[RMDB]
Overview
An RNA of 207 nucleotides, treated with 2A3 and DMS and read out base by base. Reactivities are rounded to 0.1 and cut off at 0 and 3. DMS (dimethyl sulfate) methylates the pairing face of unpaired adenines and cytosines. The data come from the RNA Mapping Database (RMDB), library M2RFPK. Conditions: 150 mM KOAc, 10 mM MgCl2 and 150 mM bicine (pH 8.5), 24 C. The DMS profile rests on 2,637 reads. Reactivities are given for positions 27 through 156. For 2A3, 672 sequencing reads were counted.
RNA sequence: GGGAACGACUCGAGUAGAGUCGAAAAGUCUGUGCGUUUCCAUAUGAGUAUCCUGAAAACGGGCUUUUCAGCAUGGAACGUACAUAUUAAAUAGUAGGAGUGCAUAGUGGCCCGUAUAGCAGGCAUUGAGGCGAGGAUUGUUUCGACAAUCCUCGAACCAAAAACCCUACUUCGGUAGGGUUUUUGGAAAAGAAACAACAACAACAAC
Reactivity to 2A3 in 0.01 (KOAc 150mM, MgCl2 10mM, bicine 150mM(pH8.5), 24C), signal-to-noise 1, nucleotides 027 to 156: g050u020c040u000g010u000g030c010g000u020u120u080c010c010a050u010a050u060g010a030g060u040a050u170c010c000u040g090a060a080a040a060c080g000g000g000c030u120u050u030u010c070a020g030c030a020u020g010g010a060a000c010g000u000a000c000a000u020a010u000u140a110a090a110u120a000g050u010a030g020g020a040g020u040g020c020a040u040a130g060u090g030g000c030c000c000g050u050a020u100a070g040c040a010g040g000c030a020u010u200g040a040g050g030c000g000a000g010g000a000u000u000g070u050u090u040c190g120a000c000a000a000u000c000c020u000c030g000a010a010
Reactivity to DMS in 0.01 (KOAc 150mM, MgCl2 10mM, bicine 150mM(pH8.5), 24C), signal-to-noise 1, nucleotides 027 to 156: g030u000c070u000g010u000g020c010g020u000u000u000c000c000a090u000a090u000g000a080g030u010a080u000c000c030u050g000a040a050a110a120c080g030g030g060c130u010u010u000u000c010a150g010c010a030u000g010g000a020a030c000g030u000a030c000a040u000a030u000u000a110a070a250u000a130g030u010a060g000g010a140g000u010g040c060a100u000a080g040u000g020g000c010c040c040g000u000a080u000a110g030c020a040g030g030c050a090u000u010g010a120g010g010c010g000a040g020g010a090u000u020g010u000u010u010c180g060a070c010a020a010u000c000c000u000c010g030a040a070